An RNA of 177 nucleotides, treated with DMS and read out base by base.
[RMDB]
RNA sequence: GGGAACGACUCGAGUAGAGUCGAAAAAUCGGCAUCGAGCAGGAAUAUGCCGGGAUAGGGCACACCAUAGGCUCUUGAAUCCGGUUCAUAGUUCGUAUUCAGUAUUCCGUAGGCAUUAACAUGGGUGCACGGUCAGGGAAUUCGUUCCCUGACCGUGAAAAGAAACAACAACAACAAC
Reactivity to DMS in 0.01 (KOAc 150mM, MgCl2 10mM, bicine 150mM(pH8.5), 24C), signal-to-noise 1, nucleotides 027 to 126: a050u000c050g000g030c090a020u000c050g000a070g000c040a060g000g000a080a080u010a030u000g020c000c010g020g000g020a090u010a050g010g000g020c010a080c110a130c140c200a170u020a170g000g010c000u030c020u000u000g000a160a130u020c040c000g000g000u000u000c090a020u000a050g000u000u010c040g040u010a120u000u010c090a070g050u000a070u000u000c010c010g000u000a040g000g000c000a000u000u000a030a050c110a030u000g000g000g020u000g020
The data come from the RNA Mapping Database (RMDB), library OK2TST. The DMS profile rests on 1,040 reads.